[RMDB]
RNA sequence: GGGAACGACUCGAGUAGAGUCGAAAACAUAAACAAACAAAUCGUUGGUUUGUGCUAUACCACAUGUUAAUAUCAGCAAGUGGGGUAUUCUUUGAGAUUUGGAGUUAGAUUAGGGUGGUUUUGUAAAAGAGUUAGUGUUUUUCGAAACACUAACUCUAAAAGAAACAACAACAACAAC
Reactivity to DMS in 0.01 (KOAc 150mM, MgCl2 10mM, bicine 150mM(pH8.5), 24C), signal-to-noise 5, nucleotides 027 to 126: c020a050u010a030a020a030c030a060a050a050c020a090a110a070u030c160g010u010u000g010g010u000u000u000g020u000g000c090u000a090u030a170c000c010a060c090a070u020g020u000u010a070a080u010a100u030c170a040g000c030a030a060g030u010g010g010g000g010u020a050u010u010c070u010u000u010g000a080g010a050u000u000u000g000g000a070g000u000u010a050g000a080u010u010a090g000g000g030u000g000g000u000u010u000u010g000u030a040a100a090
Reactivity to 2A3 in 0.01 (KOAc 150mM, MgCl2 10mM, bicine 150mM(pH8.5), 24C), signal-to-noise 4, nucleotides 027 to 126: c020a020u200a040a100a000c020a010a110a000c020a000a090a100u210c120g050u060u050g100g030u040u080u050g070u070g030c060u140a100u090a170c000c000a020c000a020u070g020u020u080a210a150u080a150u270c070a010g030c000a030a120g020u000g010g010g000g010u050a100u070u050c080u100u120u130g090a070g000a070u070u000u070g040g010a060g040u060u050a030g010a160u000u130a020g050g020g030u030g050g020u000u040u030u080g070u030a040a080a050